[RMDB]
RNA sequence: GGGAACGACUCGAGUAGAGUCGAAAACUAGUGCCAUUCGUGGCACUAGAAGGGGUCCAGCCUGGAAAGGCUGGAGGUAUUGGUAUGGUCGGGCCGCCAUUCAAGGUACGCUAUUCGUAGCGUACAAAACGGUUGCAGAAUUCGUUCUGCAACCGUUAAAAGAAACAACAACAACAAC
Reactivity to 2A3 in 0.01 (KOAc 150mM, MgCl2 10mM, bicine 150mM(pH8.5), 24C), signal-to-noise 1, nucleotides 027 to 126: c000u000a000g000u010g000c010c000a040u050u040c230g090u040g010g000c020a000c000u000a000g000a010a020g030g000g010g040u000c000c000a000g030c000c000u040g140g110a190a070a000g000g020c010u010g000g020a010g030g000u100a060u060u190g080g000u030a010u030g000g040u080c030g020g000g000c000c000g000c000c000a000u020u030c050a050a000g200g000u000a000c010g010c010u000a020u040u080c160g040u030a000g010c010g010u010a010c000a040a000
Reactivity to DMS in 0.01 (KOAc 150mM, MgCl2 10mM, bicine 150mM(pH8.5), 24C), signal-to-noise 1, nucleotides 027 to 126: c010u000a000g010u000g000c010c010a020u000u000c220g030u000g010g010c000a000c000u010a000g000a120a100g020g000g000g010u010c000c000a010g030c010c000u000g020g020a090a140a000g010g020c000u000g010g000a000g010g000u000a080u000u000g000g020u010a040u000g000g010u000c060g000g000g040c010c010g000c000c000a020u000u000c050a160a150g000g010u000a000c000g010c000u010a010u000u030c220g010u000a020g000c000g020u000a000c000a020a020